[RMDB]
RNA sequence: GGGAACGACUCGAGUAGAGUCGAAAAGAGGAAAGGAGUCAAGACGACACCUAAAGAACUGAAAGAGGAACUGGAAAGGGAUGAAAGGGAGCUGACCCUGUCGAAUGUUGGAGACCUCGUCGACAUGGUCUCUCCGGAAUUUCGAUUCCGGAGAGACAAAAGAAACAACAACAACAAC
Reactivity to DMS in 0.01 (KOAc 150mM, MgCl2 10mM, bicine 150mM(pH8.5), 24C), signal-to-noise 1, nucleotides 027 to 126: g020a040g020g010a060a150a050g000g020a070g020u000c030a080a120g030a110c140g010a080c100a070c140c010u000a090a070a080g000a060a080c070u000g000a050a060a060g000a050g020g010a030a040c080u000g000g010a090a030a050g000g030g030a030u010g000a070a080a020g020g000g000a020g090c150u010g010a070c010c030c050u000g020u000c030g010a060a020u030g010u020u000g000g000a140g000a190c070c000u010c050g010u000c030g000a020c020a020u000g010

Conditions: 150 mM KOAc, 10 mM MgCl2 and 150 mM bicine (pH 8.5), 24 C. The record gives the reactivity of an RNA of 177 nucleotides to DMS. For DMS, 822 sequencing reads were counted. For DMS the reverse transcriptase was MarathonRT. Values cover nucleotides 27 to 126.